Structure probing data (2A3 and DMS) for a 207-nucleotide construct. For 2A3, 3,354 sequencing reads were counted. DMS adducts were read by reverse transcription with MarathonRT. The DMS profile rests on 3,853 reads. Source: RMDB library M2RFOK, as collected in RNAgym.
RNA sequence: GGGAACGACUCGAGUAGAGUCGAAAAAGCACGGUUUUUGAGGACGCAUUUUGUCCGUGCGGUAAUGCCCUCCUUUACACUUUCUCGCAUGGUGCGGGAGUGUGGAGAGGAAACAAAAGCUAGUCUGGAUAGGCGGUUAACUUCGGUUAACCGCCAACUACUAUUACGCCUUCGGGCGUAAUAGUAGAAAAGAAACAACAACAACAAC
Reactivity to 2A3 in 0.01 (KOAc 150mM, MgCl2 10mM, bicine 150mM(pH8.5), 24C), signal-to-noise 4, nucleotides 027 to 156: a010g000c000a010c000g000g000u000u000u000u000u000g080a110g000g020a010c030g020c100a140u000u000u000u000g000u010c000c000g000u000g000c010g030g050u140a060a030u190g030c010c000c010u030c010c000u030u060u040a020c010a010c010u100u170u040c030u030c000g030c030a090u280g250g000u270g180c000g010g000g000a000g000u010g000u000g020g000a060g010a010g020g030a010a020a000c010a000a010a000a000g090c050u080a020g000u000c010u000g000g060a120u120a140g000g000c000g000g000u000u000a000a010c000u050u050c200g030g000u000u000a000a000c030c000g000c000c000a000a000
Reactivity to DMS in 0.01 (KOAc 150mM, MgCl2 10mM, bicine 150mM(pH8.5), 24C), signal-to-noise 1, nucleotides 027 to 156: a110g010c000a000c000g020g000u000u000u000u020u010g000a070g010g000a020c010g030c100a150u000u000u000u000g020u000c020c000g040u000g010c000g000g010u000a040a080u000g000c040c000c010u000c020c000u020u000u010a050c000a020c030u010u000u000c010u000c020g010c020a300u000g030g040u000g030c010g010g010g010a020g030u000g020u000g010g010a040g010a120g000g000a080a050a020c030a030a030a030a050g030c110u010a100g000u000c000u000g000g000a220u000a090g000g010c000g000g020u000u000a010a010c010u000u000c300g060g030u000u000a010a020c020c000g020c000c010a010a030